[RMDB]
RNA sequence: GGGAACGACUCGAGUAGAGUCGAAAAGGAAGUGACCUAUAUGUCGUUUGAGGGCGGCUCGCCGAAGGUCUAUCUGCUGCAACUUGAAACCGGCCAGCGCGAGCUUGUCGGCAACUUCCCCGGCAUACUAUAGUGAUCGGUUCGCCGAUCACUAUAGAAAAGAAACAACAACAACAAC
Reactivity to DMS in 0.01 (KOAc 150mM, MgCl2 10mM, bicine 150mM(pH8.5), 24C), signal-to-noise 4, nucleotides 027 to 126: g010g010a130a060g010u000g000a130c040c050u000a160u010a080u000g010u010c030g010u000u000u000g020a080g020g010g020c020g010g000c010u000c040g010c030c030g000a140a100g020g000u010c030u000a260u010c050u010g010c090u010g020c180a110a120c080u000u000g000a050a060a150c160c140g010g000c010c010a040g000c300g000c070g000a050g000c010u000u000g020u000c000g000g000c040a040a050c190u000u000c010c020c010c070g000g010c040a040u010a130
Reactivity to 2A3 in 0.01 (KOAc 150mM, MgCl2 10mM, bicine 150mM(pH8.5), 24C), signal-to-noise 3, nucleotides 027 to 126: g040g030a060a110g100u090g150a090c000c020u050a080u020a020u230g030u020c020g050u040u160u210g110a090g050g060g000c000g000g000c000u010c020g050c050c000g110a160a060g020g020u000c020u030a060u000c040u070g040c030u060g050c050a090a090c080u080u130g050a130a070a030c090c050g030g000c010c010a040g000c070g000c030g100a020g000c000u020u090g000u010c000g040g020c010a020a050c040u010u010c010c010c000c000g000g000c010a040u060a070
Structure probing data (DMS and 2A3) for a 177-nucleotide construct.
DMS adducts were read by reverse transcription with MarathonRT.
The data come from the RNA Mapping Database (RMDB), library OK2TST.
Values cover nucleotides 27 to 126.
For 2A3 the reverse transcriptase was SuperScript II with manganese.